[RMDB]
Notes
This 207-nucleotide RNA was probed chemically with 2A3 and DMS. The 2A3 profile rests on 1,029 reads. Conditions: 150 mM KOAc, 10 mM MgCl2 and 150 mM bicine (pH 8.5), 24 C.
RNA sequence: GGGAACGACUCGAGUAGAGUCGAAAAACAUUGUAUGGUGGCAUAAAUUAUAUGUUUGUGAAUGACCUCACGUUGCAUUUUGUAGACCCUAUGCUUGUAAGAAUAGCAAUACGUGGCUUAGCUCAUGCUGAUCUAACUGUUUUUAGAGCAGUUGAACCCAUAGACGCAUGUUCGCAUGCGUCUAUGGAAAAGAAACAACAACAACAAC
Reactivity to 2A3 in 0.01 (KOAc 150mM, MgCl2 10mM, bicine 150mM(pH8.5), 24C), signal-to-noise 3, nucleotides 027 to 156: a000c020a010u000u170g090u120a140u150g010g000u040g000g060c010a000u080a030a260a090u280u090a100u110a040u130g100u030u040u090g120u040g100a230a190u030g050a060c010c000u030c020a020c060g050u020u070g020c010a030u040u000u020u250g030u020a020g100a160c030c000c000u020a020u020g040c010u010u030g030u120a010a050g040a230a140u070a060g000c000a000a100u040a120c090g030u090g010g010c010u030u080a030g030c030u020c040a000u030g010c000u020g040a050u030c040u000a030a010c010u030g040u120u050u040u040u250a160g010a000g050c010a010g000u000u000g020a050a050c030
Reactivity to DMS in 0.01 (KOAc 150mM, MgCl2 10mM, bicine 150mM(pH8.5), 24C), signal-to-noise 1, nucleotides 027 to 156: a060c020a040u000u000g010u000a080u000g030g000u000g000g030c020a050u000a050a040a050u000u000a120u020a100u000g020u000u000u010g060u000g000a130a140u010g010a120c060c000u000c050a120c150g010u000u000g000c000a150u000u020u000u000g040u000a090g000a080c000c030c030u000a070u000g050c030u010u000g000u000a130a110g050a070a130u000a030g040c010a050a160u000a100c080g010u010g000g030c050u000u000a090g060c020u000c010a060u000g010c020u010g000a040u000c030u020a020a070c120u000g010u000u000u000u000u000a070g000a050g000c010a040g010u000u000g040a060a050c130